[RMDB]
RNA sequence: GGGAACGACUCGAGUAGAGUCGAAAAGAUAUGGAGGCAGCAACAGCGUGGUGUCGGAAACGACACACACGACAUGCUGCUCCUAAGUCAAAACAUGAUAAUUUGUGUUCGCACAAAUUAUCAUGAACUGCAAUUGUACGUUCGCGUACAAUUGCAGAAAAGAAACAACAACAACAAC
Reactivity to DMS in 0.01 (KOAc 150mM, MgCl2 10mM, bicine 150mM(pH8.5), 24C), signal-to-noise 2, nucleotides 027 to 126: g010a010u000a300u000g010g010a020g000g020c000a000g000c000a010a100c300a140g000c020g020u000g000g010u010g000u000c000g010g000a100a120a210c020g020a000c000a000c020a030c000a000c000g000a100c130a210u000g000c000u000g020c000u000c000c000u010a020a140g010u000c050a070a070a100a200c010a010u000g020a010u000a020a000u000u000u000g000u000g000u000u000c230g000c020a000c000a010a000a000u000u000a000u000c000a000u000g000a030a200
Reactivity to 2A3 in 0.01 (KOAc 150mM, MgCl2 10mM, bicine 150mM(pH8.5), 24C), signal-to-noise 2, nucleotides 027 to 126: g040a020u040a040u080g000g030a050g200g170c000a000g030c000a000a120c020a190g080c020g010u040g080g000u000g000u050c030g000g060a080a030a030c020g000a000c010a020c110a030c010a010c040g100a030c000a030u040g010c020u020g000c000u010c020c000u020a090a000g030u050c020a040a020a130a090c010a000u020g020a000u020a030a010u020u010u000g010u000g040u070u050c260g070c120a000c000a000a000a000u000u020a010u030c000a000u010g030a020a010